[RMDB]
RNA sequence: GGGAACGACUCGAGUAGAGUCGAAAAGAUAAUGUCUUCGGACAUUAUCCACGCCUAAAGGCUUUAAUUAAUUAGCUAAGCCAGCUAAUUAAAAUGGCAUUAACAACUGUCCAUUCGUGGACAGUAAGUUAAGCCAAAUAUUCGUAUUUGGCUUAACAAAAGAAACAACAACAACAAC
Reactivity to 2A3 in 0.01 (KOAc 150mM, MgCl2 10mM, bicine 150mM(pH8.5), 24C), signal-to-noise 8, nucleotides 027 to 126: g000a000u000a000a010u000g000u000c010u030u060c210g080g000a000c000a000u000u000a000u000c000c010a030c050g040c000c010u100a180a120a030g160g010c010u090u060u040a070a050u030u030a000a010u010u000a040g000c020u080a090a030g250c080c060a010g010c010u010a010a020u010u010a010a010a020a060u100g010g000c020a050u070u140a100a040c070a040a020c010u000g000u000c000c000a020u040u070c200g110u030g000g000a000c000a000g000u000a000a040
Reactivity to DMS in 0.01 (KOAc 150mM, MgCl2 10mM, bicine 150mM(pH8.5), 24C), signal-to-noise 8, nucleotides 027 to 126: g000a010u000a000a000u010g000u000c000u000u020c190g020g010a010c000a000u010u000a000u000c000c050a110c300g000c010c000u010a070a100a120g010g010c000u000u000u010a080a140u000u000a000a010u000u000a000g010c000u000a070a150g020c300c270a030g000c000u000a000a000u000u000a010a020a090a100u000g000g010c000a110u010u010a090a090c190a080a060c000u000g000u000c000c000a040u010u010c180g040u000g000g000a010c000a000g010u000a010a060